[RMDB]
RNA sequence: GGGAACGACUCGAGUAGAGUCGAAAAGCGCCCAAAUCCUCGGGAUCGACCGAUAGCACCGCGCUGAGCAAAGCGCUGCCGUUGUCGUCGGCGAAUCGCGGUGGGGCCACCGAAACGACGUUGGGCGAACUUGAGUUCAUUUCGAUGAACUCAAGUUAAAAGAAACAACAACAACAAC
Reactivity to 2A3 in 0.01 (KOAc 150mM, MgCl2 10mM, bicine 150mM(pH8.5), 24C), signal-to-noise 6, nucleotides 027 to 126: g020c000g010c000c000c000a010a040a050u090c020c010u020c010g030g010g080a120u090c080g140a170c020c010g110a100u120a090g050c010a000c010c010g000c010g020c060u100g040a050g040c070a090a220a130g090c080g000c060u040g010c020c000g030u050u050g040u070c020g000u000c010g000g000c010g040a050a030u040c020g000c010g070g020u080g030g090g010g020c010c010a030c000c000g030a060a030a010c030g050a000c030g020u030u030g000g010g000c010g010
Reactivity to DMS in 0.01 (KOAc 150mM, MgCl2 10mM, bicine 150mM(pH8.5), 24C), signal-to-noise 5, nucleotides 027 to 126: g020c060g010c010c000c000a010a040a100u050c070c040u000c010g000g000g020a120u020c090g000a190c020c010g010a090u020a140g000c020a020c020c040g010c030g000c090u020g000a150g020c120a120a120a090g000c200g000c020u010g000c050c040g000u020u020g000u000c010g000u000c020g010g010c020g010a080a070u020c030g000c050g000g000u000g000g000g020g000c040c050a150c020c020g000a040a070a070c070g000a040c070g020u000u000g000g010g000c020g000